[RMDB]
Notes:
An RNA of 177 nucleotides, treated with 2A3 and DMS and read out base by base. The reactions ran in a buffer of 150 mM KOAc, 10 mM MgCl2 and 150 mM bicine (pH 8.5), at 24 C. The data come from the RNA Mapping Database (RMDB), library OK2TRN.
RNA sequence: GGGAACGACUCGAGUAGAGUCGAAAACUAGCUAGCAUGCGCGCCAUGUACAUGCUGAGUACCUAGGUACCACUACGCGGAUCACGUGAUCCAGGUACGAUCUCUAGCAUGUGAUCCGAUCGCUGACCAACUUCUUCUGUUUCGACAGAAGAAGUUGAAAAGAAACAACAACAACAAC
Reactivity to 2A3 in 0.01 (KOAc 150mM, MgCl2 10mM, bicine 150mM(pH8.5), 24C), signal-to-noise 7, nucleotides 027 to 126: c020u020a020g050c020u030a000g010c010a010u030g000c080g030c020g040c160c110a230u280g020u050a030c010a030u030g000c010u020g030a030g020u050a060c010c010u050a120g030g020u050a050c000c030a040c110u260a080c170g040c020g040g000a010u010c000a010c060g020u030g020a040u050c010c030a010g030g000u030a050c050g100a190u030c060u000c010u100a030g000c010a020u020g010u010g010a010u000c030c000g030a100u120c120g030c100u060g030a090c030
Reactivity to DMS in 0.01 (KOAc 150mM, MgCl2 10mM, bicine 150mM(pH8.5), 24C), signal-to-noise 7, nucleotides 027 to 126: c050u000a040g030c170u010a040g010c010a010u000g000c020g010c030g020c200c190a090u020g020u000a070c010a010u000g000c000u000g010a100g030u010a060c110c010u000a040g010g010u000a150c050c020a140c150u010a080c180g000c010g000g010a010u000c000a040c060g020u000g000a080u000c010c040a020g000g000u000a040c130g010a090u000c090u010c050u000a030g000c020a010u000g020u000g000a020u000c010c010g010a090u000c100g010c080u010g010a250c190